[RMDB]
RNA sequence: GGGAACGACUCGAGUAGAGUCGAAAAGAUAUGGAUGUCCUGGGACAUGGCACCUGUCGGAAACGACAGAGUGCCAACAGCCCAUGACAUCCUAAGUCAAACUGCUGGCUCUUCGGAGCCAGCAGAACAAUAGUGUACCCUUCGGGGUACACUAUUGAAAAGAAACAACAACAACAAC
Reactivity to DMS in 0.01 (KOAc 150mM, MgCl2 10mM, bicine 150mM(pH8.5), 24C), signal-to-noise 3, nucleotides 027 to 126: g020a010u000a060u010g000g000a020u000g000u010c000c100u000g000g000g010a040c100a120u000g010g020c000a020c000c000u010g000u010c000g000g000a010a000a030c000g010a020c000a020g000a130g060u010g020c000c010a020a020c170a190g030c000c000c000a000u000g000a000c010a000u000c000c000u000a000a060g000u000c010a150a140a300c010u000g000c000u000g000g020c010u000c000u000u010c190g010g000a010g010c000c000a000g000c020a000g000a040a170
Reactivity to 2A3 in 0.01 (KOAc 150mM, MgCl2 10mM, bicine 150mM(pH8.5), 24C), signal-to-noise 1, nucleotides 027 to 126: g000a000u040a050u080g000g040a000u020g000u040c040c050u010g000g010g020a110c240a300u230g000g000c010a010c010c010u010g000u000c000g000g000a010a010a000c040g020a000c010a000g080a020g080u010g020c000c000a010a000c010a010g000c000c000c000a020u010g000a000c000a000u000c000c000u000a000a010g010u010c000a060a060a220c000u000g000c000u000g000g000c000u030c010u090u130c300g130g010a000g000c030c000a000g010c000a010g000a000a000